[RMDB]
RNA sequence: GGGAACGACUCGAGUAGAGUCGAAAAUCUGUCGCUCGCAAUAGCCUUCAUCGCUUGAUGCUUUUGACCACGGAUGUACUGGCACUGGUAGGAAAGCGAUGAUCAGGAAGGUCGGUGCGUUUUCGCCCGAUAGGAGCCCCUUCGGGGGCUCCUAUCGAAAAGAAACAACAACAACAAC
Reactivity to 2A3 in 0.01 (KOAc 150mM, MgCl2 10mM, bicine 150mM(pH8.5), 24C), signal-to-noise 2, nucleotides 027 to 126: u120c070u080g210u240c090g010c010u010c020g010c010a030a120u090a140g010c020c000u040u060c000a000u000c000g020c020u040u030g000a030u010g030c000u020u000u030u000g300a300c030c010a130c090g090g060a100u240g120u200a120c020u060g000g000c000a000c000u030g090g000u040a020g000g170a060a020a000g000c000g060a010u030g000a030u040c030a070g000g010a020a050g060g010u160c000g040g000u020g050c000g020u060u000u020u060c000g060c010c000